[RMDB]
Structure probing data (2A3 and DMS) for a 177-nucleotide construct. Conditions: 150 mM KOAc, 10 mM MgCl2 and 150 mM bicine (pH 8.5), 24 C. Values cover nucleotides 27 to 126.
RNA sequence: GGGAACGACUCGAGUAGAGUCGAAAAAGAAAGCAAGGCGAAGCGAAGCCACCACCGCGGGAGCUGUACGUUGUACGAGAGCUCAGCUUUUACCUUCCCAAACCGCGGAAAGGGAAAACCCAAAAAAUCUAUGGUAUUAGUUCGCUAAUACCAUAGAAAAAGAAACAACAACAACAAC
Reactivity to 2A3 in 0.01 (KOAc 150mM, MgCl2 10mM, bicine 150mM(pH8.5), 24C), signal-to-noise 3, nucleotides 027 to 126: a020g030a020a010a000g010c020a040a050g010g000c020g060a090a020g140c030g110a070a010g010c040c000a010c020c000a030c010c000g000c000g010g010g000a010g000c010u010g020u080a030c060g100u090u230g110u240a030c020g030a030g000a010g300c000u000c000a000g000c000u030u000u010u020a020c000c040u020u030c000c000c030a010a040a020c010c010g000c000g020g040a070a030a050g020g000g000a060a060a020a060c040c030c040a070a150a000a030a010a050
Reactivity to DMS in 0.01 (KOAc 150mM, MgCl2 10mM, bicine 150mM(pH8.5), 24C), signal-to-noise 5, nucleotides 027 to 126: a100g010a020a020a000g020c010a230a100g010g010c010g010a180a150g020c110g010a080a190g000c050c010a050c030c010a100c010c000g020c010g000g000g000a010g010c000u000g020u000a040c010g020u000u010g020u000a100c020g010a150g010a030g020c010u000c010a110g000c010u000u000u000u000a090c130c130u000u000c000c000c000a050a070a100c010c000g020c010g000g000a030a040a040g000g000g000a060a050a080a110c050c040c040a000a020a090a060a070a080

The data come from the RNA Mapping Database (RMDB), library M2PK90.